Source information: Chemical mapping of a 170-nucleotide RNA with DMS and 2A3.
[RMDB]
RNA sequence: GGGAACGACUCGAGUAGAGUCGAAAACAGGGUCCCGAGUGAGGCUUAUCCCGGGGAACUCGGCCCAGUCCCGAGAUAGCCGCGUCCGAGGUUCCCAUUCAAAGGGGAGAGGGGGGGACUUGGAGCAAACGUUACGAGUUCGCUCGUAACAAAAGAAACAACAACAACAAC
Reactivity to DMS in 0.01 (KOAc 150mM, MgCl2 10mM, bicine 150mM(pH8.5), 24C), signal-to-noise 5, nucleotides 027 to 129: c130a090g030g010g020u020c040c030c000g000a110g020u060g000a100g020g030c070u030u020a080u030c030c020c010g030g010g000g020a060a030c030u020c090g000g000c010c010c020a100g020u000c070c020c010g000a000g000a040u040a020g010c030c000g000c110g000u040c020c030g030a070g010g020u040u010c000c000c000a090u040u030c150a050a110a110g000g010g010g010a020g010a100g000g000g000g000g000g000g000a010c050u000u000g000g000a020g030c130a010a070a090c160
Reactivity to 2A3 in 0.01 (KOAc 150mM, MgCl2 10mM, bicine 150mM(pH8.5), 24C), signal-to-noise 8, nucleotides 027 to 129: c060a040g040g000g040u060c030c000c010g000a020g030u130g020a040g020g030c060u130u130a040u090c010c000c000g010g000g020g010a060a050c030u030c060g050g010c000c000c000a010g030u020c010c000c010g010a020g000a020u060a000g020c030c030g030c060g060u000c020c010g010a040g030g000u050u050c010c010c000a020u120u100c060a050a070a030g020g000g010g010a050g010a020g030g010g000g000g000g000g000a000c000u030u080g030g000a030g010c070a060a050a030c090
It was measured as part of the RMDB library 15KLIB.
The reactions ran in a buffer of 150 mM KOAc, 10 mM MgCl2 and 150 mM bicine (pH 8.5), at 24 C.